Notes: This 177-nucleotide RNA was probed chemically with 2A3 and DMS. DMS adducts were read by reverse transcription with MarathonRT. Reactivities are given for positions 27 through 126. 2A3 adducts were read by reverse transcription with SuperScript II with manganese. Source: RMDB library OK1LIB, as collected in RNAgym.

RNA sequence: GGGAACGACUCGAGUAGAGUCGAAAAGACUAUACAACUAGAACAGUAUUAUAUACCAAGUGACAAGCGAGUCCAAGCAUGAUACUUGCAGUGGUAACUAUGAAGAUAGGCAGGCUAUCAUACAAAGAAGAGAAAUAAUAUUCGUAUUAUUUCUCUUAAAAGAAACAACAACAACAAC
Reactivity to 2A3 in 0.01 (KOAc 150mM, MgCl2 10mM, bicine 150mM(pH8.5), 24C), signal-to-noise 8, nucleotides 027 to 126: g030a020c040u050a020u050a170c070a170a040c100u090a050g070a200a040c040a020g040u030a040u260u060a100u070a030u020a150c020c020a100a040g040u020g120a060c030a100a040g070c050g040a010g040u000c030c000a050a050g050c030a040u080g010a020u030a070c020u000u010g000c030a060g040u080g090g030u070a060a030c020u020a060u180g110a070a050g050a150u040a030g040g040c030a010g060g000c020u020a010u050c010a020u060a120c060a050a160a000g180
Reactivity to DMS in 0.01 (KOAc 150mM, MgCl2 10mM, bicine 150mM(pH8.5), 24C), signal-to-noise 8, nucleotides 027 to 126: g020a060c050u000a050u020a030c070a100a180c050u010a070g000a130a090c100a090g010u000a030u000u020a100u020a210u010a070c020c050a070a080g000u010g020a100c160a070a100g010c040g010a060g000u000c010c110a070a130g040c070a020u000g000a050u000a030c040u000u010g000c020a090g020u020g000g010u010a060a250c040u000a020u000g010a100a060g000a030u000a010g010g010c020a040g000g000c160u000a010u010c020a030u030a070c130a050a080a110g020